[RMDB]
RNA sequence: GGGAACGACUCGAGUAGAGUCGAAAAUACGCUAAGUUCGCUUAGCGUAAAAUAUAUGGGAGUAUAUAAAACCUGAUAGCCGUAGAAGAUCAUGUAUCGGCAAAAUCACCAUCUUCGGAUGGUGAAACAACCAUAUACUGUUCGCAGUAUAUGGUUGAAAAGAAACAACAACAACAAC
Reactivity to DMS in 0.01 (KOAc 150mM, MgCl2 10mM, bicine 150mM(pH8.5), 24C), signal-to-noise 8, nucleotides 027 to 126: u000a010c000g010c000u000a000a000g010u000u010c240g030c000u000u000a000g010c000g010u000a010a020a090a040u010a020u000a020u000g010g030g010a230g010u000a020u000a020u000a100a060a120a160c000c020u000g010a210u000a130g010c010c000g010u000a130g010a140a110g000a060u010c140a070u010g010u000a090u010c000g000g000c020a050a050a060a120u000c000a000c000c000a010u000c010u000u010c190g020g000a010u000g000g010u000g000a000a050a120
Reactivity to 2A3 in 0.01 (KOAc 150mM, MgCl2 10mM, bicine 150mM(pH8.5), 24C), signal-to-noise 8, nucleotides 027 to 126: u040a000c000g000c000u010a000a000g010u010u070c130g050c120u000u000a000g010c000g000u000a000a000a000a000u040a000u010a030u020g030g030g020a090g090u020a020u000a000u020a090a120a030a040c010c010u020g060a100u090a080g010c010c020g020u030a020g040a300a030g040a130u140c050a070u190g080u150a060u100c010g000g000c020a030a000a020a070u020c000a000c000c000a000u000c000u020u040c140g100g000a000u000g000g000u000g000a000a000a000
Chemical mapping of a 177-nucleotide RNA with DMS and 2A3.
The DMS profile rests on 14,510 reads.
For DMS the reverse transcriptase was MarathonRT.
The 2A3 profile rests on 21,056 reads.